[RMDB]
The record gives the reactivity of an RNA of 177 nucleotides to DMS and 2A3. The reactions ran in a buffer of 150 mM KOAc, 10 mM MgCl2 and 150 mM bicine (pH 8.5), at 24 C. The 2A3 profile rests on 20,071 reads. For 2A3 the reverse transcriptase was SuperScript II with manganese.
RNA sequence: GGGAACGACUCGAGUAGAGUCGAAAAGACGACCCCUAUGAAUGCGUGCGCGCCGCCGACGCCAUGGUCGUCAUCACCGAAUGGGACAGUAUCCGGCGACUGGACCUGUCGCGCGUGCGUCAGGCCAAGGCGCCGAUUUAUUCGUAAAUCGGCGCCUAAAAGAAACAACAACAACAAC
Reactivity to DMS in 0.01 (KOAc 150mM, MgCl2 10mM, bicine 150mM(pH8.5), 24C), signal-to-noise 9, nucleotides 027 to 126: g000a040c040g010a050c020c000c240c110u000a200u010g010a120a080u010g010c060g020u000g000c080g010c050g020c040c050g020c060c040g010a100c040g010c020c070a080u000g010g010u000c010g010u000c020a070u010c100a170c040c030g010a090a090u010g000g000g010a090c090a070g000u000a220u000c090c020g010g010c030g010a080c120u010g010g000a070c110c010u000g000u000c020g010c010g010c260g020u010g010c000g010u000c020a020g000g000c030c050a080
Reactivity to 2A3 in 0.01 (KOAc 150mM, MgCl2 10mM, bicine 150mM(pH8.5), 24C), signal-to-noise 8, nucleotides 027 to 126: g020a000c020g030a020c010c010c010c020u090a140u300g190a260a080u190g090c020g030u050g040c050g010c010g030c040c020g040c020c030g020a020c020g000c010c020a050u080g020g010u010c000g030u000c000a020u080c030a030c020c020g030a110a120u180g020g000g030a030c030a070g060u090a080u080c040c040g020g010c010g040a030c060u060g000g040a130c000c010u010g010u020c010g000c010g020c090g120u240g010c000g010u010c000a000g020g000c010c010a010